The record gives the reactivity of an RNA of 177 nucleotides to 2A3 and DMS.
In probing experiments dimethyl sulfate is read out at A N1 and C N3, which are open when not base-paired.
The reactions ran in a buffer of 150 mM KOAc, 10 mM MgCl2 and 150 mM bicine (pH 8.5), at 24 C.
2A3 adducts were read by reverse transcription with SuperScript II with manganese.
Values cover nucleotides 27 to 126.

RNA sequence: GGGAACGACUCGAGUAGAGUCGAAAAGAUAUGGAAGAAAGCCGAUAAGAAGGUAUCGGAAACGAUACUCUUCUUUUGACGGCUAAUUCCUAAGUCAAACCAUGGUUGUGUUCGCACAACCAUGGAAGAAUAAGCUUCAGUUCGCUGAAGCUUAUUCAAAAGAAACAACAACAACAAC
Reactivity to 2A3 in 0.01 (KOAc 150mM, MgCl2 10mM, bicine 150mM(pH8.5), 24C), signal-to-noise 5, nucleotides 027 to 126: g010a010u040a020u080g000g000a020a010g020a080a180a010g010c010c020g090a190u180a300a020g000a000a000g000g010u010a000u000c000g000g000a030a020a010c030g000a000u010a000c040u060c010u210u030c000u020u060u050u120g140a020c000g000g000c000u000a000a010u010u000c000c000u010a050a010g020u010c050a080a030a090c010c000a000u000g010g000u000u000g010u000g050u050u090c290g080c130a000c000a000a000c020c000a010u000g000g000a000a010
Reactivity to DMS in 0.01 (KOAc 150mM, MgCl2 10mM, bicine 150mM(pH8.5), 24C), signal-to-noise 5, nucleotides 027 to 126: g000a020u000a150u010g000g020a010a000g000a160a060a040g000c000c010g020a170u010a030a020g000a020a000g000g000u000a000u000c000g010g000a040a040a070c010g010a000u000a000c000u020c010u010u000c000u000u010u010u010g010a180c050g000g000c000u000a010a230u000u000c000c000u000a030a140g000u000c010a120a110a210c000c000a000u000g000g010u000u000g020u000g010u000u010c250g020c010a000c000a000a000c000c000a000u000g000g000a020a020